[RMDB]
RNA sequence: GGGAACGACUCGAGUAGAGUCGAAAAACAGGCUUCAUUCUGCCCAUUCGCGACAUCCGCGCCAGCGUUGGGGCUGGUUUUCUGUACCCCUUAGUAGGAACGGUAAGUGCAUGCUGCAAGGGAGUAGUGGGCGCAUCUGCACUUCUCGUCUGAAGUAUACUCACGGUACUUUCGAGUACCGUGAGUAAAAAGAAACAACAACAACAAC
Reactivity to 2A3 in 0.01 (KOAc 150mM, MgCl2 10mM, bicine 150mM(pH8.5), 24C), signal-to-noise 1, nucleotides 027 to 156: a010c060a030g040g000c010u050u040c030a110u200u010c020u150g010c000c000c040a060u100u090c020g020c000g120a090c030a160u050c080c040g030c030g020c040c020a040g000c040g020u030u040g020g010g000g000c000u030g030g000u100u000u000u010c070u030g050u060a060c000c000c000c000u000u040a050g000u010a000g040g120a100a020c000g000g020u020a030a000g000u020g000c010a010u060g020c010u050g030c020a060a110g100g050g040a160g080u090a030g050u100g020g000g000c000g000c030a030u020c020u090g000c000a000c000u020u000c020u000c000g020u000c020u010g040a030a010g100u160a080
Structure probing data (2A3) for a 207-nucleotide construct.
Source: RMDB library OK3TST, as collected in RNAgym.
Conditions: 150 mM KOAc, 10 mM MgCl2 and 150 mM bicine (pH 8.5), 24 C.